[RMDB]
RNA sequence: GGGAACGACUCGAGUAGAGUCGAAAACGAGUGCAAUAAAGACGCGGUUGCCGAUCGGUAUGGAUGCCACCGUGACGGCUCAAUCACACAAGUGCCAACGAUAACGAGGCGCUCGCUAUUUCUGCGUAAAAGCGACGAUCGUUCGCGAUCGUCGCAAGAAGGGGACAUAGUUCGCUAUGUCCCCUUCAAAAGAAACAACAACAACAAC
Reactivity to 2A3 in 0.01 (KOAc 150mM, MgCl2 10mM, bicine 150mM(pH8.5), 24C), signal-to-noise 2, nucleotides 027 to 156: c040g010a010g010u050g020c030a100a170u090a160a220a030g070a030c050g000c010g000g000u040u030g000c050c030g050a070u060c040g040g060u150a180u220g120g060a070u120g030c020c000a000c010c010g010u040g010a000c020g000g040c010u020c000a040a120u100c030a050c020a010c010a170a000g010u010g060c000c010a150a020c100g050a070u120a250a070c090g040a120g110g000c010g000c020u030c000g000c000u020a060u130u100u040c040u120g090c030g080u080a010a040a100a090g000c000g000a000c000g020a000u010c000g020u070u100c130g000c010g140a000u010c000g030u000c010g000c010a000a000
Reactivity to DMS in 0.01 (KOAc 150mM, MgCl2 10mM, bicine 150mM(pH8.5), 24C), signal-to-noise 1, nucleotides 027 to 156: c010g010a060g060u040g010c030a140a130u000a110a130a090g010a100c040g020c020g000g000u000u010g000c000c000g000a110u040c030g000g010u020a100u020g020g000a150u000g030c090c040a060c030c010g040u000g060a180c130g050g000c060u000c080a000a080u000c050a080c050a100c050a140a090g020u000g020c000c010a030a090c010g020a120u010a040a130c040g010a220g000g000c000g060c070u000c040g000c000u000a140u000u010u020c050u010g000c050g040u000a040a100a070a170g050c000g000a030c000g000a070u030c000g120u000u000c300g040c060g000a010u000c000g000u000c000g000c000a000a020